RNA sequence: GGGAACGACUCGAGUAGAGUCGAAAAGAUAUGGACAAUCUACGAGAGCUUGGACCUAGGCUCGGAAACGAGCCUAGCUAGCUCGAGUAGAGUUGUCCUAAGUCAAAACCAAUCCUUCGGGAUUGGACAAAUGUGUAGACUUCGGUCUACACAUUUGAAAAGAAACAACAACAACAAC
Reactivity to 2A3 in 0.01 (KOAc 150mM, MgCl2 10mM, bicine 150mM(pH8.5), 24C), signal-to-noise 3, nucleotides 027 to 126: g020a040u120a060u210g010g000a000c010a010a000u010c020u010a000c000g010a010g000a010g110c050u200u230g070g100a130c020c030u000a000g010g000c000u010c030g000g050a050a050a030c010g000a010g020c050c000u000a000g010c020u020a000g010c000u000c000g010a000g020u010a000g000a000g000u020u020g000u000c000c000u000a070a020g040u000c040a050a020a080a210c000c000a010a010u030c020c000u050u150c300g230g000g000a000u000u010g000g020a090
Reactivity to DMS in 0.01 (KOAc 150mM, MgCl2 10mM, bicine 150mM(pH8.5), 24C), signal-to-noise 6, nucleotides 027 to 126: g000a060u000a300u000g010g010a020c000a040a060u000c000u000a010c010g000a300g000a010g020c010u000u010g040g010a120c300c020u010a010g000g010c000u010c000g000g000a080a100a150c020g020a010g010c000c000u000a000g010c030u000a020g010c000u000c000g000a300g000u010a020g010a030g020u000u000g000u000c000c000u000a010a100g010u010c040a110a100a180a210c010c000a010a000u000c010c000u000u010c280g030g010g010a010u000u000g000g000a170

Structure probing data (2A3 and DMS) for a 177-nucleotide construct. The 2A3 profile rests on 8,048 reads. For 2A3 the reverse transcriptase was SuperScript II with manganese. DMS adducts were read by reverse transcription with MarathonRT. Source: RMDB library TTRDES, as collected in RNAgym. The reactions ran in a buffer of 150 mM KOAc, 10 mM MgCl2 and 150 mM bicine (pH 8.5), at 24 C.